[RMDB]
The record gives the reactivity of an RNA of 177 nucleotides to DMS and 2A3. For 2A3 the reverse transcriptase was SuperScript II with manganese. The 2A3 profile rests on 21,499 reads. For DMS the reverse transcriptase was MarathonRT. 2A3 is a SHAPE reagent: it acylates the 2'-hydroxyl of flexible nucleotides of all four kinds. The RNA was probed in 150 mM KOAc, 10 mM MgCl2 and 150 mM bicine (pH 8.5) at 24 C.
RNA sequence: GGGAACGACUCGAGUAGAGUCGAAAAGUGCUUGAGCACUGAGAGUUCGCUGUCGUUGAUGCGAUCCGGAAAGCAUUUGCGACUCUCUGAUGUCGAUCCGGAAAGACAUCUGUGCUCUUGCACGAAAGGGACAUGCGUGCUUCGGCAUGCGUGUCCCAAAAGAAACAACAACAACAAC
Reactivity to DMS in 0.01 (KOAc 150mM, MgCl2 10mM, bicine 150mM(pH8.5), 24C), signal-to-noise 4, nucleotides 027 to 126: g010u000g010c010u000u010g000a020g010c010a010c050u030g000a010g000a010g000u020u030c020g020c020u000g010u040c190g000u040u010g000a020u010g010c010g010a090u020c030c010g000g010a110a100a250g000c020a000u000u000u010g000c000g000a030c000u000c010u000c020u030g000a000u010g010u000c000g010a110u030c040c030g000g020a150a150a300g000a020c000a010u000c020u020g010u000g000c000u000c010u000u000g000c000a000c010g010a020a080a100
Reactivity to 2A3 in 0.01 (KOAc 150mM, MgCl2 10mM, bicine 150mM(pH8.5), 24C), signal-to-noise 9, nucleotides 027 to 126: g000u010g000c000u010u000g000a000g000c010a020c060u050g020a000g000a000g030u180u180c030g000c020u050g070u220c100g160u110u300g030a020u020g000c020g030a090u050c030c000g030g040a070a030a010g000c010a010u050u060u170g000c000g010a010c000u000c000u000c000u010g000a000u010g000u010c010g020a080u040c010c010g020g000a090a080a000g000a000c000a000u000c020u060g000u000g000c000u000c000u000u010g000c000a000c000g000a020a010a010